[RMDB]
RNA sequence: GGGAACGACUCGAGUAGAGUCGAAAACGGCUUCGAGAUAAUGCUGGGCUAGCCGCUGCAGCACGGGCUGAUUCUGAGUCGGUUCUACCAGUAUAUGUAUAUGAUUCAGACUUAUUUGACGCCAUUGGGGAGCGACAACAGGCAUUUUGGAUGCAUGCUAGAAUUAGCCAUUCGUGGCUAAUUCUAGAAAAGAAACAACAACAACAAC
Reactivity to 2A3 in 0.01 (KOAc 150mM, MgCl2 10mM, bicine 150mM(pH8.5), 24C), signal-to-noise 5, nucleotides 027 to 156: c020g030g030c030u130u080c110g160a180g030a130u150a200a080u140g020c000u040g000g030g000c030u070a070g080c070c030g020c040u120g100c020a000g010c020a020c070g030g020g000c010u030g010a070u080u030c020u040g020a020g020u030c010g020g060u090u000c020u060a130c020c030a040g100u080a100u060a060u250g100u050a100u010a030u200g090a070u080u070c050a030g020a050c030u100u090a070u120u150u080g030a050c020g000c010c010a050u000u060g040g000g000g010a030g050c040g040a030c020a070a020c010a020g090g000c010a010u000u030u090u190g090g010a030u080g040c050a030u110g040
Reactivity to DMS in 0.01 (KOAc 150mM, MgCl2 10mM, bicine 150mM(pH8.5), 24C), signal-to-noise 2, nucleotides 027 to 156: c040g040g000c010u030u080c070g020a130g000a050u000a040a020u010g000c020u010g050g010g060c020u000a100g020c040c060g020c030u010g000c080a150g040c030a060c100g000g000g030c030u020g020a150u000u000c020u020g020a050g010u000c010g040g030u000u000c060u000a080c060c040a110g010u000a140u000a070u000g000u000a130u000a110u030g000a050u000u000c030a090g020a120c110u000u000a110u000u000u000g020a250c080g000c000c080a170u000u000g030g080g010g000a170g000c020g010a100c070a100a100c100a070g020g010c010a080u000u000u010u000g010g020a110u000g030c030a100u000g000